[RMDB]
The record gives the reactivity of an RNA of 207 nucleotides to 2A3 and DMS. The DMS profile rests on 9,640 reads. DMS adducts were read by reverse transcription with MarathonRT.
RNA sequence: GGGAACGACUCGAGUAGAGUCGAAAAGAUAGGGCCGUGCUACCUAGGGAGGGUCCCCUGCAUGGGCUGCUCCUCUUUUCUCCAGCACACCGCCUGUUGGUGCACAGAGUUGGAAAUGCAGUAGACGUAUCCAUGUGUUCAGACUAGGUUAGAGAAGAAUUCUAUUAACCUUCGGGUUAAUAGAAUUAAAAGAAACAACAACAACAAC
Reactivity to 2A3 in 0.01 (KOAc 150mM, MgCl2 10mM, bicine 150mM(pH8.5), 24C), signal-to-noise 4, nucleotides 027 to 156: g080a040u140a030g040g000g000c040c050g020u030g030c010u030a040c010c020u040a040g010g000g010a030g010g010g010u050c000c000c020c020u030g010c030a060u040g000g020g000c020u110g080c000u020c000c010u110c010u100u070u050u020c060u030c040c040a000g010c020a010c010a030c030c070g040c010c020u030g030u080u040g010g000u030g020c030a020c020a040g100a050g070u090u110g040g000a050a050a030u050g000c010a000g000u100a050g020a100c090g040u080a030u050c020c020a040u030g020u000g010u040u050c040a010g010a040c050u120a020g030g060u070u140a050g060a020g070a150a020g090
Reactivity to DMS in 0.01 (KOAc 150mM, MgCl2 10mM, bicine 150mM(pH8.5), 24C), signal-to-noise 3, nucleotides 027 to 156: g020a150u000a060g000g010g000c020c090g020u000g030c020u000a080c040c030u000a110g000g020g010a060g010g030g010u010c040c000c020c070u000g000c110a100u010g000g010g030c050u000g010c030u000c010c020u010c060u000u000u000u000c030u000c040c070a120g010c040a050c030a100c040c030g000c040c020u000g020u000u000g020g020u000g030c050a100c070a110g000a130g000u000u020g010g000a070a090a090u000g010c030a090g010u000a080g020a090c080g020u000a060u000c020c010a070u000g020u000g020u000u000c030a120g000a120c020u000a060g010g000u010u000a110g010a170g010a140a130g000